[RMDB]
RNA sequence: GGGAACGACUCGAGUAGAGUCGAAAAUGUUAAAGGGCACUGGAAAUCAGGCUGUCCUAGGACUGCCCUAGAUCAUCCCACUGCACUUGUCACUGGGACAUUGGGGUGGAUAAUGAAGCUAUUGGCAGCUUUAAGCAUCAUGUACAAAAGUGCUGCAGAACCUAAGAGUGUUCGCACUCUUAGGUUCAAAAGAAACAACAACAACAAC
Reactivity to DMS in 0.01 (KOAc 150mM, MgCl2 10mM, bicine 150mM(pH8.5), 24C), signal-to-noise 1, nucleotides 027 to 156: u000g020u010u000a070a090a090g020g040g020c010a110c010u020g000g020a080a140a070u000c110a100g020g010c000u000g030u000c020c030u000a120g000g000a130c010u010g030c010c010c130u000a030g000a170u000c060a030u000c030c000c000a030c010u020g000c010a090c080u010u030g020u010c050a100c100u010g030g000g030a080c090a080u000u000g000g040g000g000u030g010g000a090u010a090a090u000g000a120a100g000c030u000a140u000u000g010g020c000a060g020c020u000u000u010a000a110g010c030a030u010c080a070u010g060u020a140c140a100a090a100a090g000u010g000c010u020g040c060a280
Reactivity to 2A3 in 0.01 (KOAc 150mM, MgCl2 10mM, bicine 150mM(pH8.5), 24C), signal-to-noise 2, nucleotides 027 to 156: u160g000u020u050a160a040a020g000g000g050c010a000c050u040g010g030a130a090a100u180c040a030g080g010c090u050g010u050c020c030u010a020g040g040a010c000u000g020c000c000c000u080a130g000a150u060c020a010u010c000c010c000a020c040u080g010c040a100c170u060u100g030u170c000a040c110u090g010g080g030a010c020a020u020u060g040g000g000g000u020g020g000a070u130a230a010u200g120a060a020g030c040u070a070u140u130g020g010c020a010g000c020u000u040u110a100a000g000c000a020u070c030a090u200g100u150a060c090a040a100a010a020g000u020g020c010u010g000c000a030
Structure probing data (DMS and 2A3) for a 207-nucleotide construct. For 2A3 the reverse transcriptase was SuperScript II with manganese. 2A3 is a SHAPE reagent: it acylates the 2'-hydroxyl of flexible nucleotides of all four kinds. DMS adducts were read by reverse transcription with MarathonRT. Values are in units of 0.01, from 0 to 300, in steps of 10. The data come from the RNA Mapping Database (RMDB), library OK3TST. The reactions ran in a buffer of 150 mM KOAc, 10 mM MgCl2 and 150 mM bicine (pH 8.5), at 24 C.